[RMDB]
The record gives the reactivity of an RNA of 177 nucleotides to DMS and 2A3. The reactions ran in a buffer of 150 mM KOAc, 10 mM MgCl2 and 150 mM bicine (pH 8.5), at 24 C. Reactivities are rounded to 0.1 and cut off at 0 and 3. For DMS, 2,270 sequencing reads were counted. Values cover nucleotides 27 to 126. DMS adducts were read by reverse transcription with MarathonRT. For 2A3, 3,141 sequencing reads were counted.

RNA sequence: GGGAACGACUCGAGUAGAGUCGAAAAGAUAUGGACAGUCCAGCAUCGAUCAUAGGAUUCGGAAACGAAUCUAUGGGAGCUGCGACUGUCCUAAGUCAAAAGAAAUUGACGUUCGCGUCAAUUUCAACAUGAGUGUGUUGUUCGCAACACACUCAUGAAAAGAAACAACAACAACAAC
Reactivity to DMS in 0.01 (KOAc 150mM, MgCl2 10mM, bicine 150mM(pH8.5), 24C), signal-to-noise 2, nucleotides 027 to 126: g010a030u000a120u030g000g000a020c000a000g040u000c000c000a010g020c000a300u000c260g000a120u010c010a000u000a020g000g020a030u000u000c000g000g000a020a030a060c000g000a040a010u000c000u000a020u000g000g000g010a110g050c000u000g000c290g000a010c000u000g010u010c000c000u000a000a050g010u000c010a090a070a130a130g000a010a000a010u010u000g000a000c010g040u010u010c300g020c000g000u010c010a010a000u000u000u000c010a120a180
Reactivity to 2A3 in 0.01 (KOAc 150mM, MgCl2 10mM, bicine 150mM(pH8.5), 24C), signal-to-noise 2, nucleotides 027 to 126: g000a020u040a010u070g000g000a000c000a000g020u000c010c000a000g020c010a090u300c230g200a110u060c040a000u000a060g300g000a060u020u020c000g010g000a000a010a000c010g000a020a000u000c010u010a000u010g050g040g090a250g060c010u020g000c030g020a000c000u000g000u000c000c000u000a020a000g000u010c030a050a000a000a110g010a000a030a000u000u000g020a010c030g040u120u120c300g050c050g110u010c000a000a020u030u000u000c010a000a020